[RMDB]
The record gives the reactivity of an RNA of 177 nucleotides to 2A3 and DMS. The RNA was probed in 150 mM KOAc, 10 mM MgCl2 and 150 mM bicine (pH 8.5) at 24 C. For 2A3 the reverse transcriptase was SuperScript II with manganese. Reactivities are given for positions 27 through 126.

RNA sequence: GGGAACGACUCGAGUAGAGUCGAAAAGAUAUGGAUGCCUAAGCACGAUAAGAUGGUGUCGGAAACGACACUCAUCUUUUGACGUGCGAAGGCAUCCUAAGUCAAAAGUCUGAGCUUCGGCUCAGACGACAUAAACUCUCUUCGGAGAGUUUAUGUCAAAAGAAACAACAACAACAAC
Reactivity to 2A3 in 0.01 (KOAc 150mM, MgCl2 10mM, bicine 150mM(pH8.5), 24C), signal-to-noise 3, nucleotides 027 to 126: g040a010u040a040u130g010g000a000u010g010c010c000u030a060a020g010c000a010c040g150a120u050a280a010g000a010u000g000g020u010g010u000c010g020g030a080a080a010c000g000a010c000a000c010u180c010a010u010c010u030u010u000u060g060a040c060g000u000g000c010g000a010a000g010g000c000a000u010c000c000u000a000a000g010u000c020a040a060a100a260g000u020c000u000g010a010g010c010u070u180c300g120g000c000u000c000a000g000a000c000
Reactivity to DMS in 0.01 (KOAc 150mM, MgCl2 10mM, bicine 150mM(pH8.5), 24C), signal-to-noise 9, nucleotides 027 to 126: g000a040u010a300u000g000g000a010u000g010c000c000u010a060a300g000c000a010c000g030a190u000a020a010g010a010u000g010g020u000g010u010c000g010g000a120a080a140c000g010a020c000a010c000u020c010a000u000c000u000u000u000u010g020a170c120g010u000g000c000g000a240a030g000g010c000a000u000c000c000u000a010a080g010u000c030a090a080a120a170g000u000c000u000g000a020g000c000u000u020c300g020g010c000u000c000a000g000a000c010